RNA sequence: GGGAACGACUCGAGUAGAGUCGAAAAUGCUCCAGGUUUGAUAAAGGUCCUGGGAACCAAUUACAAGUCCUUCUCAUGCCUUAUACUAAGCAACAAAAGCAGAUAGUGUUUGGCGUUCACCACAGCGCUAGCAUUUAGCGUUCGCGCUAAAUGCUAGAAAAGAAACAACAACAACAAC
Reactivity to DMS in 0.01 (KOAc 150mM, MgCl2 10mM, bicine 150mM(pH8.5), 24C), signal-to-noise 2, nucleotides 027 to 126: u010g020c110u020c010c040a080g000g000u000u020u000g010a130u000a090a060a060g010g000u000c020c010u000g010g000g000a040a120c080c040a110a090u020u010a110c110a080a100g000u010c000c020u000u010c010u020c060a110u030g010c000c020u010u000a060u010a040c060u000a010a070g020c020a060a060c190a070a090a130a110g000c040a040g020a190u000a010g000u020g000u000u000u010g020g010c010g010u010u010c060a050c050c040a090c220a100g020c140g010
Reactivity to 2A3 in 0.01 (KOAc 150mM, MgCl2 10mM, bicine 150mM(pH8.5), 24C), signal-to-noise 2, nucleotides 027 to 126: u070g000c020u050c020c040a020g040g000u050u090u080g160a170u140a100a140a030g080g010u020c000c000u020g030g010g000a030a050c020c000a040a090u160u100a070c050a030a030g040u010c000c000u030u020c020u020c020a060u120g010c000c000u020u050a030u020a020c020u040a040a040g030c030a030a080c080a080a210a020a020g010c030a010g030a300u100a040g030u020g020u000u010u040g040g020c030g010u040u020c050a070c120c000a020c040a010g050c080g000